[RMDB]
RNA sequence: GGGAACGACUCGAGUAGAGUCGAAAACAUUUCCGAAGGAUUCGGAAAUAACUUUGGCGAGACGGUUGGAGACACUAGCUGACUGAGUUUUUAUCCUAGCUGCCAACUGUUAGGAAAGCGUACCUGAGUGGUAUAGCGUAUUCGUACGCUAUACCACAAAAGAAACAACAACAACAAC
Reactivity to DMS in 0.01 (KOAc 150mM, MgCl2 10mM, bicine 150mM(pH8.5), 24C), signal-to-noise 3, nucleotides 027 to 126: c130a110u010u000u000c020c000g000a020a190g020g030a140u020u020c000g000g000a000a010a020u000a060a100c110u010u000u010g010g010c040g000a080g000a030c060g020g000u010u010g010g020a070g020a140c180a120c070u000a040g010c080u010g010a100c180u060g000a080g010u000u010u020u000u020a080u000c060c020u010a030g000c070u060g000c010c000a010a000c070u010g000u000u000a150g000g030a030a060a020g020c070g000u030a140c060c000u030g010a240
Reactivity to 2A3 in 0.01 (KOAc 150mM, MgCl2 10mM, bicine 150mM(pH8.5), 24C), signal-to-noise 5, nucleotides 027 to 126: c030a020u000u000u000c010c000g010a060a100g300g120a220u100u070c010g010g000a000a000a000u030a030a000c030u070u050u100g110g070c020g010a060g020a160c010g050g000u010u020g100g000a070g020a010c070a030c080u050a030g010c060u040g080a090c010u040g050a110g160u090u040u060u220u150a090u020c010c000u010a020g010c040u130g080c020c000a020a030c050u000g010u020u010a040g050g000a050a030a040g050c030g020u050a060c010c010u020g020a000
Structure probing data (DMS and 2A3) for a 177-nucleotide construct. 2A3 adducts were read by reverse transcription with SuperScript II with manganese. The reactions ran in a buffer of 150 mM KOAc, 10 mM MgCl2 and 150 mM bicine (pH 8.5), at 24 C.